[RMDB]
RNA sequence: GGGAACGACUCGAGUAGAGUCGAAAAGCGAUGCAGAUGGCGGCUAGGCAUCGCACCUCUAUCCGGUGUCAAACCAAUGGCGCAGACCUCAGGCACCGAGCGCGUAUUUCGGAGCAUGUGUUUCGGGCACUAUCGUUACGUUCGCGUAACGAUAGUGAAAAGAAACAACAACAACAAC
Reactivity to DMS in 0.01 (KOAc 150mM, MgCl2 10mM, bicine 150mM(pH8.5), 24C), signal-to-noise 1, nucleotides 027 to 126: g020c030g010a020u000g020c010a030g030a130u000g010g010c000g020g010c000u000a160g020g020c000a000u030c020g010c020a110c110c000u000c060u000a050u000c100c010g010g000u020g020u010c050a030a120a210c080c050a100a090u000g000g030c000g010c030a100g000a070c040c060u000c050a080g020g000c030a000c020c040g000a040g000c060g000c050g000u000a060u010u010u000c030g010g000a160g020c070a040u000g000u030g030u000u000u000c010g020g010g000
Reactivity to 2A3 in 0.01 (KOAc 150mM, MgCl2 10mM, bicine 150mM(pH8.5), 24C), signal-to-noise 1, nucleotides 027 to 126: g000c000g000a000u000g000c000a030g030a120u080g080g020c040g010g030c040u060a030g130g000c010a000u010c030g020c030a050c030c000u010c030u050a050u010c060c030g040g000u140g020u000c000a050a110a000c060c000a040a090u140g020g020c070g000c040a020g070a120c010c000u100c080a050g020g090c020a010c000c080g030a010g000c060g020c010g040u080a150u060u100u000c030g020g010a040g040c060a070u130g020u000g020u060u050u020c010g010g010g000